The record gives the reactivity of an RNA of 177 nucleotides to DMS and 2A3. For DMS, 2,463 sequencing reads were counted. For 2A3 the reverse transcriptase was SuperScript II with manganese. The reactions ran in a buffer of 150 mM KOAc, 10 mM MgCl2 and 150 mM bicine (pH 8.5), at 24 C.
RNA sequence: GGGAACGACUCGAGUAGAGUCGAAAAGAUAUGGAGCUUGUGACAGCAACAGCCAGCCAUCGGAAACGAUGGAGCUGGACAUGCUGUACAAGCUCCUAAGUCAAAGACGAUACUUCGGUAUCGUCAAGAUAUGCUGUGUCUUCGGACACAGCAUAUCAAAAGAAACAACAACAACAAC
Reactivity to DMS in 0.01 (KOAc 150mM, MgCl2 10mM, bicine 150mM(pH8.5), 24C), signal-to-noise 3, nucleotides 027 to 126: g020a010u000a300u000g010g010a010g020c020u000u000g010u010g010a050c040a000g010c020a090a050c160a260g010c000c010a040g000c000c010a030u000c000g000g010a120a040a120c010g010a010u010g000g010a120g010c000u000g010g010a020c100a300u010g010c010u000g020u010a010c000a010a010g010c000u000c000c010u010a000a060g010u000c010a100a130a130g000a020c020g020a020u000a000c000u010u010c200g040g010u000a000u000c000g010u010c010a060a080
Reactivity to 2A3 in 0.01 (KOAc 150mM, MgCl2 10mM, bicine 150mM(pH8.5), 24C), signal-to-noise 2, nucleotides 027 to 126: g020a000u050a020u130g000g000a010g030c000u020u000g010u080g210a060c010a020g030c040a130a100c040a170g020c030c010a010g020c010c000a000u000c020g020g020a050a020a020c010g020a010u020g070g080a050g140c000u010g000g030a000c020a180u300g040c000u010g000u020a000c000a000a000g000c000u000c000c000u000a000a000g010u000c010a010a050a080g010a000c010g010a010u000a020c000u060u140c300g090g020u010a010u000c000g000u010c010a010a000